[RMDB]
RNA sequence: GGGAACGACUCGAGUAGAGUCGAAAACUCACUCGCAGCUUAAUAACCUGCGCUGAGCCCUUCUCCCCCAGCUUGCCUGUGUCCUAGGGAAUUGGAAGGUCAUCCUUCACAGGAUCGUGUGGAAGUCAUUACUCGUGAGUGUUCGCACUCACGAGAACAAACAAGGUCAGUUCGCUGACCUUGUUUGAAAAGAAACAACAACAACAAC
Reactivity to DMS in 0.01 (KOAc 150mM, MgCl2 10mM, bicine 150mM(pH8.5), 24C), signal-to-noise 1, nucleotides 027 to 156: c030u000c000a030c100u000c000g040c070a020g030c040u000u000a160a100u000a190a090c190c000u010g050c000g000c300u000g000a030g000c000c010c070u010u000c040u000c000c000c000c010c000a090g010c050u010u000g020c000c010u000g010u000g050u000c030c040u000a090g020g020g000a110a130u000u000g020g020a080a050g020g010u000c080a130u000c020c030u000u030c080a110c030a060g040g010a030u000c060g010u030g000u000g000g000a110a300g010u010c090a100u010u000a140c010u020c000g090u000g000a050g040u000g020u000u010c300g050c000a010c000u000c000a000c010g000a010g000a030a130
Reactivity to 2A3 in 0.01 (KOAc 150mM, MgCl2 10mM, bicine 150mM(pH8.5), 24C), signal-to-noise 1, nucleotides 027 to 156: c000u000c000a040c050u070c000g000c000a010g000c010u050u000a020a020u050a030a150c010c000u020g000c000g030c080u020g000a030g040c040c040c000u080u090c070u080c030c020c010c030c000a000g040c040u080u100g060c020c000u020g000u000g020u020c000c030u040a030g020g000g120a110a050u160u150g120g000a070a020g050g020u110c030a030u150c000c000u060u050c000a030c030a040g000g030a020u080c080g010u080g020u040g120g040a070a010g120u070c020a090u050u110a110c000u000c030g000u000g000a000g000u010g000u030u150c150g070c110a000c000u000c000a000c000g000a000g000a000a000